Structure probing data (2A3 and DMS) for a 170-nucleotide construct.
DMS adducts were read by reverse transcription with MarathonRT.
The reactions ran in a buffer of 150 mM KOAc, 10 mM MgCl2 and 150 mM bicine (pH 8.5), at 24 C.
For 2A3, 2,893 sequencing reads were counted.
For DMS, 5,905 sequencing reads were counted.
Values cover nucleotides 27 to 129.
[RMDB]
RNA sequence: GGGAACGACUCGAGUAGAGUCGAAAAGCACGACACAGCAGUUAACAAUCGAAGUCUUAGUGACUGUCGAUGGUGUAAAUUUUAGAACAGUCGUUCUAAAUAAUAAGAACACUUAUAGAUCACAGCUCAAUCACGCCCUUCGGGGCGUGAAAAAGAAACAACAACAACAAC
Reactivity to 2A3 in 0.01 (KOAc 150mM, MgCl2 10mM, bicine 150mM(pH8.5), 24C), signal-to-noise 2, nucleotides 027 to 129: g030c010a000c040g050a020c100a000c000a070g000c000a000g000u040u170a110a000c000a020a090u010c000g030a000a030g000u000c000u110u160a250g000u080g110a000c000u010g030u020c020g000a010u010g000g010u010g000u030a020a040a120u000u000u020u000a000g000a000a000c000a140g160u140c040g000u030u020c000u030a000a000a000u080a000a000u090a110a000g150a200a000c040a050c000u060u040a040u120a160g090a180u110c050a010c000a030g000c020u000c070a000a100
Reactivity to DMS in 0.01 (KOAc 150mM, MgCl2 10mM, bicine 150mM(pH8.5), 24C), signal-to-noise 3, nucleotides 027 to 129: g080c040a080c100g020a100c040a060c060a000g050c040a010g050u020u030a100a040c150a150a030u010c000g040a100a000g010u020c020u000u100a040g020u020g030a000c020u020g000u050c030g020a040u000g030g000u030g000u130a000a080a150u000u000u000u000a040g040a010a010c000a200g030u080c130g020u000u050c000u050a050a030a030u000a000a000u040a130a030g030a100a090c120a060c020u010u080a110u030a140g010a060u000c080a090c120a040g050c030u010c100a040a050